Source information
Structure probing data (DMS) for a 177-nucleotide construct. Values are in units of 0.01, from 0 to 300, in steps of 10. Values cover nucleotides 27 to 126.
RNA sequence: GGGAACGACUCGAGUAGAGUCGAAAAUGGGACACAAUUGCUGGGGCCCUGAAUACCUGCUCUAUCAGGAAGCGCCUAAAACCCAAUCUCAGUCCCUUGCUUAGCUGCACUCGCCCUAGUAAUGAUGUCGAGGAUAGCAUUUCGAUGCUAUCCUCGAAAAAGAAACAACAACAACAAC
Reactivity to DMS in 0.01 (KOAc 150mM, MgCl2 10mM, bicine 150mM(pH8.5), 24C), signal-to-noise 1, nucleotides 027 to 126: u000g000g000g000a030c070a130c160a110a030u010u010g030c040u020g030g000g000g020c030c050c020u000g000a060a070u000a140c100c000u010g000c060u020c070u000a120u000c010a030g020g010a240a080g020c100g010c080c000u000a020a020a070a120c000c020c040a110a150u010c090u010c190a080g010u020c000c000c010u010u000g020c180u020u000a040g010c040u000g000c030a040c080u000c120g000c000c000c030u000a050g010u030a010a060u000g010a160u010g010